RNA sequence: GGGAACGACUCGAGUAGAGUCGAAAAGGGUUUGGUUUGGUCCCGAACUUCUGUAUGGACCGUCUCCGCAACGGUACUCAGUUGCCUAAGAAUGUUAAACUCAGGCACGAAUCCGACAGAGUGUGUAGUCAAAAUGGAUAUUCGUAUCCAUUUUGACAAAAGAAACAACAACAACAAC
Reactivity to DMS in 0.01 (KOAc 150mM, MgCl2 10mM, bicine 150mM(pH8.5), 24C), signal-to-noise 8, nucleotides 027 to 126: g000g000g010u000u010u000g020g010u010u000u010g010g010u000c030c010c020g010a090a070c030u000u000c020u000g010u000a070u010g010g000a060c010c010g010u000c030u000c130c130g020c160a130a040c020g000g000u000a090c130u000c100a080g010u010u000g010c010c000u000a040a020g010a100a080u010g020u010u010a100a110a110c020u000c040a020g000g000c000a030c030g010a070a150u010c040c030g000a060c050a040g000a050g010u000g010u000g020u010a160
Reactivity to 2A3 in 0.01 (KOAc 150mM, MgCl2 10mM, bicine 150mM(pH8.5), 24C), signal-to-noise 6, nucleotides 027 to 126: g050g020g000u090u100u080g090g000u040u070u100g020g020u060c020c010c020g020a020a010c010u100u060c010u060g070u070a200u210g010g020a030c010c000g000u000c030u020c040c040g060c070a040a010c000g000g010u040a050c040u010c030a070g030u180u070g030c000c000u020a060a030g070a080a100u220g060u300u230a060a040a030c020u030c030a010g000g000c010a000c020g030a030a050u010c010c010g020a020c030a020g040a050g030u090g020u050g040u100a090
Conditions: 150 mM KOAc, 10 mM MgCl2 and 150 mM bicine (pH 8.5), 24 C. Chemical mapping of a 177-nucleotide RNA with DMS and 2A3. It was measured as part of the RMDB library OK2TST. For 2A3, 7,587 sequencing reads were counted.